Structure probing data (DMS and 2A3) for a 177-nucleotide construct.
The reactions ran in a buffer of 150 mM KOAc, 10 mM MgCl2 and 150 mM bicine (pH 8.5), at 24 C.
For 2A3, 1,200 sequencing reads were counted.
For 2A3 the reverse transcriptase was SuperScript II with manganese.
For DMS the reverse transcriptase was MarathonRT.
RNA sequence: GGGAACGACUCGAGUAGAGUCGAAAAGCGCCCCUUUUCGAAGGGGCGCACUGGAAAUAAAGCCGAAAGGCUAGGCAUUCCUAAUUUGGCGAAAGCCUGCCACUAUUGAGAUCUUCGGAUCUCAAAACUAAUUACGUCCGUUCGCGGACGUAAUUAGAAAAGAAACAACAACAACAAC
Reactivity to DMS in 0.01 (KOAc 150mM, MgCl2 10mM, bicine 150mM(pH8.5), 24C), signal-to-noise 1, nucleotides 027 to 126: g000c000g030c000c000c000c000u000u000u000u050c200g000a020a000g020g000g060g030c000g010c000a020c050u010g000g000a050a080a070u030a140a110a070g000c010c020g000a120a120a080g000g010c000u000a040g000g010c050a060u000u000c020c000u050a040a120u050u010u000g010g010c010g020a120a080a120g020c000c000u020g020c000c040a070c290u000a140u020u000g000a030g020a000u000c000u010u020c180g050g010a000u000c000u000c000a020a010a070a280
Reactivity to 2A3 in 0.01 (KOAc 150mM, MgCl2 10mM, bicine 150mM(pH8.5), 24C), signal-to-noise 2, nucleotides 027 to 126: g020c000g000c000c000c000c000u010u010u000u030c170g100a040a030g030g010g000g060c040g000c000a000c000u020g010g130a010a030a140u170a030a220a010g000c000c000g060a090a030a040g000g000c010u030a040g040g020c010a050u030u050c000c000u050a150a170u140u140u250g030g000c020g060a050a030a010g000c000c020u010g000c020c010a100c070u100a230u110u060g000a000g000a000u000c000u010u120c300g100g010a000u000c010u010c000a000a000a000a000
The data come from the RNA Mapping Database (RMDB), library M2PK50.